[RMDB]
RNA sequence: GGGAACGACUCGAGUAGAGUCGAAAAAGCGGCGGAUUUUCAGUUUUAUUGCACACCAGCGUACCACCUGCGCGUGGGUCUUUGCUGGAGCCGACAAAGACCGGGAUAUCGCUGCGUACUGCGGGUACAUAUCGGUACCUUUCGAGGUACCGAUAUGAAAAGAAACAACAACAACAAC
Reactivity to DMS in 0.01 (KOAc 150mM, MgCl2 10mM, bicine 150mM(pH8.5), 24C), signal-to-noise 4, nucleotides 027 to 126: a140g010c040g020g010c010g000g010a090u000u000u000u010c030a100g000u000u000u000u010a100u010u010g000c090a090c110a130c030c010a040g010c020g020u000a140c020c030a030c040c040u010g010c290g020c160g020u000g000g000g000u000c070u000u010u010g010c010u000g010g000a060g020c110c040g010a150c030a010a030a040g000a010c020c030g000g000g000a050u000a060u000c020g010c000u000g010c030g000u000a080c070u000g020c070g010g010g010u010a160
Reactivity to 2A3 in 0.01 (KOAc 150mM, MgCl2 10mM, bicine 150mM(pH8.5), 24C), signal-to-noise 2, nucleotides 027 to 126: a020g030c010g020g010c020g000g070a070u090u010u020u120c020a020g010u000u020u110u120a130u110u120g010c060a050c010a030c060c000a000g010c010g000u050a080c000c020a040c030c060u280g070c090g020c100g040u050g010g000g040u050c080u100u150u130g000c000u010g030g040a010g020c060c020g030a040c060a030a040a000g020a020c000c010g010g050g000a010u070a020u100c010g000c040u020g000c000g030u020a050c010u060g060c050g060g040g030u060a040